[RMDB]
This 207-nucleotide RNA was probed chemically with DMS and 2A3. The reactions ran in a buffer of 150 mM KOAc, 10 mM MgCl2 and 150 mM bicine (pH 8.5), at 24 C. Values cover nucleotides 27 to 156. For 2A3 the reverse transcriptase was SuperScript II with manganese. The DMS profile rests on 1,922 reads.
RNA sequence: GGGAACGACUCGAGUAGAGUCGAAAAGUAUCCCUAGAUGAUAAAACACCGCACAUGGCUCGUAAGAGCGGUUAAAUUAGCAAGUAAUGCUAAUUACGCGAGGUAACGCAUGGCCUAGGCUCGUUAGAAAAGGGAGAAUCCUUCGGGAUUCUCCCAAGCAUAAAGAGGACUUCGGUCCUCUUUAUGCAAAAGAAACAACAACAACAAC
Reactivity to DMS in 0.01 (KOAc 150mM, MgCl2 10mM, bicine 150mM(pH8.5), 24C), signal-to-noise 1, nucleotides 027 to 156: g010u000a120u020c000c000c020u000a090g010a160u020g000a240u000a110a110a110a070c020a080c020c030g040c020a120c090a180u000g020g010c020u000c060g050u020a100a150g020a080g000c030g020g000u020u000a080a020a080u000u000a000g020c020a060a260g020u040a170a200u000g010c020u000a010a010u000u020a060c090g030c000g020a100g040g020u000a100a110c050g020c050a090u000g020g020c000c030u010a120g030g000c020u000c050g020u000u000a080g000a080a050a130a150g000g000g040a050g010a020a020u000c000c000u020u010c300g080g000g000a010u000u000c020u000c000c000c020a000a020
Reactivity to 2A3 in 0.01 (KOAc 150mM, MgCl2 10mM, bicine 150mM(pH8.5), 24C), signal-to-noise 1, nucleotides 027 to 156: g090u080a100u150c000c000c020u000a040g050a090u030g000a010u150a110a120a050a090c090a120c030c090g000c000a070c030a190u080g030g000c040u050c070g090u020a080a080g000a030g100c010g000g000u000u020a000a000a000u030u010a000g000c060a140a070g130u160a300a000u080g000c000u030a000a000u010u090a040c010g000c010g040a000g020g120u040a060a000c040g020c110a010u120g070g000c000c010u000a030g020g010c000u000c030g020u030u010a090g120a050a040a000a070g040g000g000a020g000a000a000u000c000c000u080u000c070g030g000g000a000u000u000c000u050c000c000c010a000a000